[RMDB]
Structure probing data (2A3 and DMS) for a 207-nucleotide construct. High DMS reactivity at an A or C suggests that its Watson-Crick edge is free. Source: RMDB library RNAMAK, as collected in RNAgym.

RNA sequence: GGGAACGACUCGAGUAGAGUCGAAAAUCCUAAGUCAAUUGUCACCAUUGCAGUGAGUUGUCAGAGCUCGGAAACGAGCUCUUGGAUUUACGAGCAAUGCAAGUCAAUUGAUAUGGAAAAAUCGUUAGACUGGACGUUCGCGUCCAGUCUAACGAAAGCAUACAUUAAAGUUCGCUUUAAUGUAUGCAAAAGAAACAACAACAACAAC
Reactivity to 2A3 in 0.01 (KOAc 150mM, MgCl2 10mM, bicine 150mM(pH8.5), 24C), signal-to-noise 8, nucleotides 027 to 156: u020c010c010u030a110a020g010u000c000a000a010u010u000g020u010c010a020c160c000a020u010u000g000c010a010g010u010g030a020g020u020u030g300u300c040a000g000a000g000c000u000c010g020g030a080a090a050c010g000a000g010c010u000c010u010u090g000g000a000u000u000u000a020c020g010a030g170c000a000a000u010g010c020a170a160g010u000c000a000a000u000u010g000a000u010a090u110g030g030a030a070a020a040a080u060c000g000u000u000a000g000a000c000u000g010g000a010c000g030u070u060c290g050c000g060u010c000c000a000g000u000c000u000a000a000c000g000a000a000a000
Reactivity to DMS in 0.01 (KOAc 150mM, MgCl2 10mM, bicine 150mM(pH8.5), 24C), signal-to-noise 4, nucleotides 027 to 156: u000c010c010u000a070a220g010u000c000a010a010u000u010g000u000c010a300c150c010a030u000u000g020c010a260g000u010g000a030g020u000u010g010u000c110a070g020a040g010c010u000c000g030g020a160a130a300c010g030a020g020c000u000c000u000u000g010g000a030u000u000u000a020c010g020a270g060c000a010a020u000g030c040a080a130g020u000c020a020a030u010u000g010a010u000a300u000g010g000a010a090a110a120a120u000c000g000u000u000a000g010a040c000u050g010g020a040c000g030u000u010c300g060c020g030u000c000c000a000g010u000c000u000a000a010c010g020a000a030a140